[RMDB]
RNA sequence: GGGAACGACUCGAGUAGAGUCGAAAACGAUGAUGGAUAACUUGUCUGUAGAAGAUGUUGUCAACCGUGACGGCGUUGUUGAACAGCAAGUGUCAUUCAACAGCAUCUUUAUGAUGGCCGACUCCGGCUUCAGAGGUAUCUUCGGAUACCUCUGAAGAAAAGAAACAACAACAACAAC
Reactivity to 2A3 in 0.01 (KOAc 150mM, MgCl2 10mM, bicine 150mM(pH8.5), 24C), signal-to-noise 4, nucleotides 027 to 126: c040g040a040u100g000a020u060g060g030a020u050a200a080c010u010u050g120u210c020u050g040u070a040g030a160a000g020a040u020g010u030u000g010u000c020a060a070c170c090g280u200g020a010c000g000g000c060g020u000u020g040u020u100g090a050a000c010a020g030c020a030a060g030u020g020u060c010a040u090u050c020a040a050c010a030g010c000a020u000c000u060u160u110a170u260g070a040u060g070g000c000c010g130a160c040u060c070c050g020g040
Reactivity to DMS in 0.01 (KOAc 150mM, MgCl2 10mM, bicine 150mM(pH8.5), 24C), signal-to-noise 4, nucleotides 027 to 126: c160g020a100u010g010a050u000g010g000a040u000a040a030c010u000u000g000u010c020u000g020u000a100g010a100a210g000a020u000g000u010u000g010u000c010a110a160c300c300g000u000g010a030c020g010g000c040g010u010u010g010u000u010g010a090a050c030a030g000c010a030a040g020u010g000u000c080a080u000u010c050a050a090c090a060g010c010a010u000c010u000u000u010a080u030g000a040u010g000g010c020c020g000a130c130u000c050c030g030g010
An RNA of 177 nucleotides, treated with 2A3 and DMS and read out base by base. For 2A3, 2,833 sequencing reads were counted. Values cover nucleotides 27 to 126. The data come from the RNA Mapping Database (RMDB), library OK2TST. For DMS the reverse transcriptase was MarathonRT.